[RMDB]
RNA sequence: GGGAACGACUCGAGUAGAGUCGAAAAACGCCACGUUGGGCGAUAAUAACGCGGCAAACAAGCAAACAAGAUGAAAUACGCGUGCCGCAUGCGUAAUAAAUUUUAUCAACGUUCUAACCAGAGCGCAGCAGUAGUGACUCUUCGGAGUCACUACUGCAAAAGAAACAACAACAACAAC
Reactivity to 2A3 in 0.01 (KOAc 150mM, MgCl2 10mM, bicine 150mM(pH8.5), 24C), signal-to-noise 1, nucleotides 027 to 126: a000c070g000c020c020a000c190g000u000u000g030g000g000c000g000a050u050a040a060u050a000a000c040g000c000g000g000c040a000a000a100c110a230a000g050c010a000a000a090c000a030a020g050a000u160g000a060a060a060u070a000c050g070c000g040u190g060c080c060g010c040a000u000g000c000g020u100a110a170u110a020a110a000u130u110u000u000a070u060c040a040a000c000g070u040u000c000u060a190a250c110c000a110g000a000g090c000g050c040a020